[RMDB]
RNA sequence: GGGAACGACUCGAGUAGAGUCGAAAAGAUAUGGACAACUUGGAGGCAUGGACUGGACUGAUGACCGCAAUCGGAAACGAUUGCGCAAGGUCCAGUCCCACUGCCGAUGAAGAGUUGUCCUAAGUCACAAUCCAUUAUCGUUCGCGAUAAUGGAUUGAAAAGAAACAACAACAACAAC
Reactivity to DMS in 0.01 (KOAc 150mM, MgCl2 10mM, bicine 150mM(pH8.5), 24C), signal-to-noise 3, nucleotides 027 to 126: g010a030u000a300u010g010g000a020c010a000a000c000u000u000g000g000a060g040g030c000a020u010g000g010a020c010u010g000g000a030c000u000g010a150u020g000a180c300c000g000c010a010a010u010c000g020g000a170a140a240c020g000a020u000u000g000c010g000c000a050a100g000g010u000c000c000a000g020u000c000c000c040a010c100u010g010c020c000g010a040u010g000a200a150g000a030g000u000u000g010u000c000c000u010a000a060g000u000c030a250
Reactivity to 2A3 in 0.01 (KOAc 150mM, MgCl2 10mM, bicine 150mM(pH8.5), 24C), signal-to-noise 2, nucleotides 027 to 126: g030a010u120a050u170g010g000a010c000a000a000c000u010u010g040g010a010g000g030c020a070u300g010g000a010c000u000g010g000a000c000u010g110a280u180g040a300c080c040g040c000a000a010u010c010g030g000a070a120a080c020g000a020u000u010g000c000g010c000a010a120g020g010u020c010c000a000g000u010c000c000c000a040c000u010g000c000c000g040a040u020g010a000a020g010a000g020u010u000g000u000c000c000u000a050a030g040u030c010a020
The data come from the RNA Mapping Database (RMDB), library TTRINS. An RNA of 177 nucleotides, treated with DMS and 2A3 and read out base by base. For 2A3, 6,540 sequencing reads were counted. The RNA was probed in 150 mM KOAc, 10 mM MgCl2 and 150 mM bicine (pH 8.5) at 24 C. The DMS profile rests on 3,310 reads.